[RMDB]
RNA sequence: GGGAACGACUCGAGUAGAGUCGAAAACUCCUCUCAAAAUCGUUUCAGUCCAAAAUUGAUUCGGCGGCCCUGUCAUGAGGCCGAAACGAAGGCACGUACCCCUUCGAAUGGCGUCGGGGAGUCAGCGAAAGCACUGACCCUUUCGAGGGUCAGUGAACGAAAUUAAUGUGUUCGCACAUUAAUUUCGAAAAGAAACAACAACAACAAC
Reactivity to DMS in 0.01 (KOAc 150mM, MgCl2 10mM, bicine 150mM(pH8.5), 24C), signal-to-noise 2, nucleotides 027 to 156: c030u000c000c000u000c030u000c020a030a160a140a060u000c010g020u000u010u000c000a130g000u000c070c080a050a060a120a110u000u000g000a100u000u000c020g020g060c030g050g000c000c030c010u000g030u030c130a070u030g010a070g040g030c010c010g020a010a040a130c020g010a040a030g030g050c040a130c080g010u010a170c080c060c000c000u000u000c010g000a190a150u000g000g000c020g020u000c030g080g020g040g000a050g030u000c000a060g010c060g050a080a120a120g010c000a000c010u000g000a000c000c000c000u000u000u010c260g030a040g010g000g020u000c010a000g020u000g010a060a110
Reactivity to 2A3 in 0.01 (KOAc 150mM, MgCl2 10mM, bicine 150mM(pH8.5), 24C), signal-to-noise 4, nucleotides 027 to 156: c020u020c000c010u000c000u020c030a020a040a050a150u030c020g010u000u010u040c070a090g070u080c050c080a060a120a180a190u120u160g050a120u100u050c030g090g000c010g020g000c030c000c000u080g070u140c060a120u130g050a030g030g040c000c000g020a000a000a010c000g010a010a010g020g000c110a020c230g200u240a120c010c020c010c010u000u000c010g040a050a050u100g030g010c060g110u070c030g000g010g000g020a080g050u040c020a020g030c020g090a080a040a020g060c000a000c000u000g000a000c000c000c000u010u060u060c160g060a020g000g000g000u010c000a000g000u000g000a030a010